[RMDB]
RNA sequence: GGGAACGACUCGAGUAGAGUCGAAAAGAUAUGGAGUACCCCGAUAAGCGUAUAUCGGAAACGAUAUGACGCUUUUGACGGGUACUCCUAAGUCAAACCUAUUAAACUCUUCGGAGUUUAAUAGGAACAUGAGUGGAUGGUUCGCCAUCCACUCAUGAAAAGAAACAACAACAACAAC
Reactivity to DMS in 0.01 (KOAc 150mM, MgCl2 10mM, bicine 150mM(pH8.5), 24C), signal-to-noise 2, nucleotides 027 to 126: g030a000u010a300u000g000g010a010g010u000a000c010c000c000c010g000a230u000a000a020g010c000g020u000a010u000a000u010c000g010g000a080a080a200c000g020a030u000a000u010g000a030c000g010c010u000u010u000u000g000a300c300g000g000g010u000a010c000u000c000c000u000a010a010g020u000c090a080a070a150c020c000u000a010u010u000a000a010a010c000u000c000u000u010c220g010g000a000g000u000u000u000a000a010u000a000g000g000a010a140